[RMDB]
RNA sequence: GGGAACGACUCGAGUAGAGUCGAAAAUCGUGAUGGCCAGCUCGUUCUCCUCGGCCACCUCGACCAGCUUCAUCGGUGUCCUGGCUCCGGCGAGUAGAUGGUCGGGGACGCUCCUGACGAGGUAGUAAUACUUCGUUAUCUUCGGAUAACGAAGUAUAAAAGAAACAACAACAACAAC
Reactivity to DMS in 0.01 (KOAc 150mM, MgCl2 10mM, bicine 150mM(pH8.5), 24C), signal-to-noise 5, nucleotides 027 to 126: u000c060g010u000g010a090u000g010g000c030c030a070g010c070u010c080g010u000u000c050u000c020c030u000c100g010g010c020c040a130c010c000u000c010g000a050c010c020a030g010c030u010u000c050a040u000c040g000g010u000g000u010c070c110u000g010g010c020u000c030c030g010g000c070g010a030g010u000a060g010a130u000g010g010u000c000g010g000g000g010a070c100g000c080u000c020c020u010g010a080c080g010a060g010g010u000a070g000u010a110
Reactivity to 2A3 in 0.01 (KOAc 150mM, MgCl2 10mM, bicine 150mM(pH8.5), 24C), signal-to-noise 3, nucleotides 027 to 126: u130c020g010u040g050a090u100g050g010c030c020a050g000c040u040c070g060u080u030c020u010c000c000u010c020g030g000c000c010a020c000c010u020c010g050a090c010c000a000g010c010u120u050c020a070u060c020g070g040u030g040u090c040c080u140g110g000c020u030c020c010g000g000c000g000a000g000u080a030g030a090u020g000g000u010c010g000g000g000g000a010c010g010c010u040c010c010u030g020a040c030g010a010g030g030u040a020g050u020a110